[RMDB]
RNA sequence: GGGAACGACUCGAGUAGAGUCGAAAAGAUAUGGACCUGCGUGUGGGAGCUCUUCGGAAACGAAAGAGCAUCGAUCACACCAGGUCCUAAGUCAAAACGCAUGAAAUAGUUCGCUAUUUCAUGCGAACGUCACAGAAACGUUCGCGUUUCUGUGACGAAAAGAAACAACAACAACAAC
Reactivity to 2A3 in 0.01 (KOAc 150mM, MgCl2 10mM, bicine 150mM(pH8.5), 24C), signal-to-noise 1, nucleotides 027 to 126: g030a010u050a020u070g000g020a000c030c000u050g020c140g130u000g000u010g030g300g030a010g000c010u020c010u000u020c010g020g060a020a030a040c020g020a070a140a110g000a010g000c000a050u080c010g100a120u130c000a000c010a000c020c000a020g000g010u000c000c000u000a000a000g000u000c000a020a050a010a070c010g000c000a000u040g000a010a010a000u010a000g080u060u080c300g000c160u000a000u000u040u030c010a020u000g000c000g010a010a010
Reactivity to DMS in 0.01 (KOAc 150mM, MgCl2 10mM, bicine 150mM(pH8.5), 24C), signal-to-noise 2, nucleotides 027 to 126: g010a020u000a170u010g040g000a000c000c000u000g000c270g010u000g020u010g010g020g010a030g010c000u000c000u010u010c000g000g010a060a060a090c010g020a040a030a050g000a000g030c020a090u000c110g000a080u000c000a000c000a000c000c000a000g000g000u000c000c000u000a010a030g000u000c040a070a090a100a230c010g000c000a010u040g000a000a030a040u000a000g000u010u030c290g030c030u010a000u000u000u010c000a000u000g000c010g030a000a040
Chemical mapping of a 177-nucleotide RNA with 2A3 and DMS.
The data come from the RNA Mapping Database (RMDB), library TTRDEL.
For 2A3, 2,543 sequencing reads were counted.
For DMS the reverse transcriptase was MarathonRT.
Conditions: 150 mM KOAc, 10 mM MgCl2 and 150 mM bicine (pH 8.5), 24 C.
Reactivities are given for positions 27 through 126.
The DMS profile rests on 1,517 reads.